Source: RMDB library OK3TST, as collected in RNAgym. Chemical mapping of a 207-nucleotide RNA with DMS and 2A3. The DMS profile rests on 2,754 reads.
RNA sequence: GGGAACGACUCGAGUAGAGUCGAAAAUAAAUGAUUUGCCUAAAGUUAGAGAACUAAUAAGUGAGAAAGCUAGUCCUGCUGCGUUUUACUAACGUGCCAAUCAGCUGCCCAGGAAGAUAAUGAAAACUUGAGUAAGACAGGCAGCCAAAGCCACAGCCAUAAGUCCGUAGUUCGCUACGGACUUAUGAAAAGAAACAACAACAACAAC
Reactivity to DMS in 0.01 (KOAc 150mM, MgCl2 10mM, bicine 150mM(pH8.5), 24C), signal-to-noise 2, nucleotides 027 to 156: u000a070a060a120u000g010a100u000u000u010g010c000c040u010a060a110a120g030u000u010a060g000a150g030a130a140c050u020a080a060u010a070a110g000u000g020a130g020a090a070a080g040c040u010a100g030u000c030c050u000g020c020u000g030c040g020u000u000u000u010a080c080u020a110a070c070g000u000g000c030c050a050a070u000c080a040g010c040u020g000c010c000c010a150g000g000a150a180g000a110u000a000a140u020g010a080a040a060a100c100u000u000g000a050g050u020a060a110g010a110c030a090g000g010c000a050g000c000c020a020a070a100g000c000c000a020c020a050g000c110
Reactivity to 2A3 in 0.01 (KOAc 150mM, MgCl2 10mM, bicine 150mM(pH8.5), 24C), signal-to-noise 2, nucleotides 027 to 156: u030a010a080a050u110g010a050u060u050u030g040c020c090u160a190a160a020g010u070u040a060g010a010g010a050a080c080u080a070a160u190a200a010g040u070g040a060g050a110a090a040g050c040u050a020g120u060c010c060u040g040c020u050g010c010g030u000u000u050u030a080c040u010a050a070c040g000u040g000c000c000a050a070u010c040a000g010c000u020g000c000c000c030a020g060g000a050a010g020a040u090a000a100u120g040a040a050a010a040c050u070u070g000a010g060u020a050a000g020a020c050a010g000g000c000a000g010c010c030a000a080a050g030c020c020a050c010a060g040c000